The record gives the reactivity of an RNA of 177 nucleotides to DMS and 2A3. DMS adducts were read by reverse transcription with MarathonRT. It was measured as part of the RMDB library M2PK50. As a SHAPE reagent, 2A3 marks flexible, mostly unpaired nucleotides at the ribose 2'-OH. Values are in units of 0.01, from 0 to 300, in steps of 10.
RNA sequence: GGGAACGACUCGAGUAGAGUCGAAAAUUACCUCCCUUCGGGGAGGUAAACUGAACGCUGCAUGCGGCAGCGCGCUCGCUUGCGCACACACGCACAAUAAAAGCAGUAUGCACUUCGGUGCAUACAAGAACAUUAUCAAAUUCGUUUGAUAAUGUUCAAAAGAAACAACAACAACAAC
Reactivity to DMS in 0.01 (KOAc 150mM, MgCl2 10mM, bicine 150mM(pH8.5), 24C), signal-to-noise 9, nucleotides 027 to 126: u000u000a000c000c000u000c000c000c010u000u010c180g030g010g010g010a010g010g000u000a000a000a070c080u010g000a150a130c090g000c010u000g010c040a150u010g020c080g010g000c020a030g010c020g010c040g010c020u000c300g000c180u000u000g010c020g010c010a140c210a050c070a070c040g010c020a030c260a090a070u020a040a040a090a080g010c160a140g000u000a000u000g000c000a010c000u000u010c150g020g010u000g000c000a000u000a010c000a080a080
Reactivity to 2A3 in 0.01 (KOAc 150mM, MgCl2 10mM, bicine 150mM(pH8.5), 24C), signal-to-noise 9, nucleotides 027 to 126: u030u000a000c000c000u000c000c000c000u010u050c250g050g000g000g000a000g000g000u000a000a000a010c010u010g070a080a010c070g000c010u010g000c030a070u080g040c020g080g000c010a000g000c010g000c010g000c020u040c030g190c130u110u120g000c010g000c010a010c000a000c000a020c050g020c010a030c070a100a160u200a120a120a020a010g040c040a020g000u000a000u000g000c000a000c010u020u070c220g080g000u000g000c000a000u000a000c010a000a010